[RMDB]
RNA sequence: GGGAACGACUCGAGUAGAGUCGAAAAGAUGAGCAGGGACUGAAAAACCGUAUCAGUGAAACCACCGCACAGCUUAACCGUCAGCGUGAUGCGCUGGUGCGUGUCAGUGCGCAACAGGCAAAACUUAACGCAGUAAAACAGCGUUAUCAGGCCGGAAGCUGGUCAAUGAAUUCGUUCAUUGACCAGCAAAAGAAACAACAACAACAAC
Reactivity to 2A3 in 0.01 (KOAc 150mM, MgCl2 10mM, bicine 150mM(pH8.5), 24C), signal-to-noise 2, nucleotides 027 to 156: g020a000u120g000a000g050c060a050g070g000g010a040c070u150g040a140a080a040a000a020c050c030g010u030a050u050c010a000g050u030g070a060a060a000c020c020a000c000c050g020c000a000c050a100g040c040u090u250a170a100c020c040g050u100c080a020g020c030g040u010g070a080u210g000c020g000c010u000g000g110u010g000c000g060u060g070u040c050a030g050u040g050c000g020c040a040a110c010a080g000g000c000a080a050a000a050c050u050u060a020a000c010g000c050a090g010u140a090a120a000a070c040a030g010c000g000u020u010a030u060c030a000g000g000c020c030g040g000a080a000
The record gives the reactivity of an RNA of 207 nucleotides to 2A3. It was measured as part of the RMDB library OK3TST. For 2A3, 728 sequencing reads were counted. The reactions ran in a buffer of 150 mM KOAc, 10 mM MgCl2 and 150 mM bicine (pH 8.5), at 24 C.